RNA sequence: GGGAACGACUCGAGUAGAGUCGAAAACGCCAAGUUGGCCCAGCCUGGCGCGUGUUACCCCCGACUGCGGAGCCCGCACGGGGAGGCCAGCUGCCACCCGCUGGACAAGCUGGCGCGCACGCUCGUGCGGCCCCUCCAGGUUCGCCUGGAGGGGCCGAAAAGAAACAACAACAACAAC
Reactivity to DMS in 0.01 (KOAc 150mM, MgCl2 10mM, bicine 150mM(pH8.5), 24C), signal-to-noise 2, nucleotides 027 to 126: c060g070c160c130a000a070g000u010u000g010g000c000c000c000a160g040c040c040u010g000g000c070g000c070g000u000g040u000u010a300c120c010c000c010c030g000a090c130u030g010c020g000g000a180g000c300c020c020g050c000a060c000g000g040g000g000a040g010g000c000c000a020g000c000u000g000c000c020a150c060c070c240g010c160u000g000g000a170c020a030a020g010c040u010g010g000c030g000c040g020c020a020c050g070c000u010c090g050u000g010
Reactivity to 2A3 in 0.01 (KOAc 150mM, MgCl2 10mM, bicine 150mM(pH8.5), 24C), signal-to-noise 3, nucleotides 027 to 126: c040g010c010c020a070a030g040u070u070g170g020c000c000c000a010g030c020c010u020g030g000c050g000c010g060u080g060u060u220a100c000c000c000c000c010g080a170c110u060g020c020g000g090a180g050c080c060c010g000c000a020c000g000g000g020g010a050g000g070c020c000a000g000c000u030g000c010c000a030c050c080c060g000c120u010g000g040a150c030a050a010g000c010u000g000g000c020g000c000g000c050a020c030g060c020u080c040g090u060g050
The record gives the reactivity of an RNA of 177 nucleotides to DMS and 2A3. For 2A3 the reverse transcriptase was SuperScript II with manganese. For 2A3, 1,639 sequencing reads were counted. The DMS profile rests on 1,679 reads. DMS adducts were read by reverse transcription with MarathonRT. The data come from the RNA Mapping Database (RMDB), library OK1LIB. The RNA was probed in 150 mM KOAc, 10 mM MgCl2 and 150 mM bicine (pH 8.5) at 24 C.